An RNA of 177 nucleotides, treated with DMS and 2A3 and read out base by base. It was measured as part of the RMDB library OK2TST. For DMS, 1,952 sequencing reads were counted.

RNA sequence: GGGAACGACUCGAGUAGAGUCGAAAAGGCGUUCAGCUCGGCCUCGCCCAGCCAGGCAAUCAACACCUUGCCGAUGGCGGUGGCGUGCACCGGCAGGCGGCGGCCGAUGCGUGAAUAGGCGAUGGCGGAGAGGCUGAAAGUUCGCUUUCAGCCUCUCAAAAGAAACAACAACAACAAC
Reactivity to DMS in 0.01 (KOAc 150mM, MgCl2 10mM, bicine 150mM(pH8.5), 24C), signal-to-noise 1, nucleotides 027 to 126: g030g020c050g030u000u000c030a100g010c010u000c000g010g000c000c000u000c030g000c020c000c070a180g060c010c010a060g020g010c000a090a100u000c030a080a230c030a030c010c050u020u010g050c010c020g000a100u010g020g040c000g020g020u010g000g000c300g000u000g010c120a090c000c000g000g000c000a300g010g000c000g000g010c120g000g010c000c000g000a000u010g010c000g010u000g020a010a030u000a120g020g030c020g010a080u000g000g000c070g040
Reactivity to 2A3 in 0.01 (KOAc 150mM, MgCl2 10mM, bicine 150mM(pH8.5), 24C), signal-to-noise 2, nucleotides 027 to 126: g090g010c030g000u020u010c010a010g010c020u010c000g000g000c000c000u000c000g000c000c000c000a000g030c010c010a080g010g020c030a050a100u110c020a060a050c030a010c040c000u100u220g020c000c020g300a290u250g010g000c040g000g000u020g000g020c090g000u030g000c010a150c120c030g000g000c030a010g000g000c010g020g040c140g000g000c020c030g020a030u090g000c040g040u050g010a000a050u080a120g080g000c030g110a100u070g110g000c060g000